Source information: Chemical mapping of a 177-nucleotide RNA with DMS and 2A3. For 2A3 the reverse transcriptase was SuperScript II with manganese. In probing experiments dimethyl sulfate is read out at A N1 and C N3, which are open when not base-paired. Conditions: 150 mM KOAc, 10 mM MgCl2 and 150 mM bicine (pH 8.5), 24 C.
[RMDB]
RNA sequence: GGGAACGACUCGAGUAGAGUCGAAAAGAAAGAAAAUGUUGGUGCGUGACGAGGCACCUGAAGAACUUGAGCACAUCCAAGAUAACCCACCAGAUGAGGAUGAUGUUAUCGUUGAGGUGGAUUAAAACUAAAUGAGCAGGUUCGCCUGCUCAUUUAGAAAAGAAACAACAACAACAAC
Reactivity to DMS in 0.01 (KOAc 150mM, MgCl2 10mM, bicine 150mM(pH8.5), 24C), signal-to-noise 3, nucleotides 027 to 126: g020a130a090a120g000a090a060a130a110u020g030u000u010g000g010u000g010c000g020u010g010a150c060g020a010g020g010c000a030c010c010u010g010a060a070g000a080a070c070u010u000g000a020g010c030a050c020a000u000c000c000a130a120g000a110u020a040a050c060c060c010a040c020c000a150g000a100u020g010a130g010g010a020u000g010a090u000g030u000u000a010u010c010g000u000u010g010a110g020g000u000g000g030a160u000u000a040a070a090a130
Reactivity to 2A3 in 0.01 (KOAc 150mM, MgCl2 10mM, bicine 150mM(pH8.5), 24C), signal-to-noise 2, nucleotides 027 to 126: g000a030a080a020g090a040a110a010a040u230g010u160u060g010g010u020g000c000g040u080g020a020c030g010a020g000g080c020a010c020c000u020g030a040a090g040a040a020c060u150u140g000a000g030c000a030c010a000u000c010c010a090a020g030a210u120a080a040c000c000c030a000c010c000a060g050a180u160g070a090g030g000a010u030g000a060u040g030u030u060a020u020c010g000u000u070g130a070g050g000u010g000g010a030u090u300a080a060a020a040